RNA sequence: GGGAACGACUCGAGUAGAGUCGAAAAACAUUACCAAAGGACGGAACAUGGAAACCUUGGUCUUUGUGUGAUAAACAUCAGUACCGCCAGGUAAUAAAAAUGGAAGUUACGCUGUAAAAUGAACUUUUAUAAUCUCUGACUCGUCUUGGCAUAUACAUCAAUAGGUAUAGUUCGCUAUACCUAUUGAAAAAGAAACAACAACAACAAC
Reactivity to 2A3 in 0.01 (KOAc 150mM, MgCl2 10mM, bicine 150mM(pH8.5), 24C), signal-to-noise 8, nucleotides 027 to 156: a000c030a050u080u090a040c020c000a060a050a040g030g010a020c050g030g030a100a030c060a110u170g050g030a120a050a030c010c000u050u090g030g010u030c050u050u110u070g030u010g020u010g050a070u140a130a140a010c030a040u110c040a030g040u040a050c020c000g030c030c030a020g040g010u050a070a060u060a070a120a020a000a010u060g030g010a030a000g000u020u020a030c040g000c050u070g050u170a030a050a050a100u120g030a010a030c000u030u030u040u050a100u060a110a130u040c040u010c010u060g030a030c010u020c050g040u010c000u040u020g020g000c020a040u100a050u100a140c030a040
Reactivity to DMS in 0.01 (KOAc 150mM, MgCl2 10mM, bicine 150mM(pH8.5), 24C), signal-to-noise 4, nucleotides 027 to 156: a050c070a100u000u000a150c020c010a080a110a120g020g010a070c030g000g000a130a080c050a100u000g010g000a120a070a050c020c020u000u000g030g010u000c030u010u010u000g030u010g030u010g020a140u010a080a110a100c060a070u000c050a130g020u010a070c040c060g000c040c040a110g020g010u000a050a080u010a020a040a070a060a090u000g000g010a060a080g020u000u000a040c050g020c110u000g010u010a060a060a090a100u000g010a070a100c050u000u000u000u010a050u000a080a090u000c030u000c030u000g010a050c040u000c030g020u000c040u000u010g020g020c040a060u000a090u000a070c070a170
An RNA of 207 nucleotides, treated with 2A3 and DMS and read out base by base.